Record summary:
The record gives the reactivity of an RNA of 177 nucleotides to DMS. For DMS the reverse transcriptase was MarathonRT. The RNA was probed in 150 mM KOAc, 10 mM MgCl2 and 150 mM bicine (pH 8.5) at 24 C.

RNA sequence: GGGAACGACUCGAGUAGAGUCGAAAAAUGCCGUAAACGUUGGGCGCUAGGUGUGGGAUCCAUUCCACGGGUUCCGUGCCGUAGCUAACGCAUUAAGCGCCCCGCCUGGGGAGUACGGCCGCAAGGCGCCACGUACAAGCUUCGGCUUGUACGUGGCAAAAGAAACAACAACAACAAC
Reactivity to DMS in 0.01 (KOAc 150mM, MgCl2 10mM, bicine 150mM(pH8.5), 24C), signal-to-noise 1, nucleotides 027 to 126: a140u000g000c010c000g020u010a010a050a070c130g000u000u010g000g000g050c000g040c030u000a070g020g010u010g030u000g020g030g000a000u000c000c000a270u000u010c170c140a170c150g010g000g040u000u000c020c000g050u000g000c000c000g000u010a200g040c000u010a050a190c280g020c030a060u000u010a070a180g000c000g000c000c020c010c090g000c090c070u010g000g000g000g000a250g010u000a040c020g010g000c010c210g000c150a090a040g010g010c080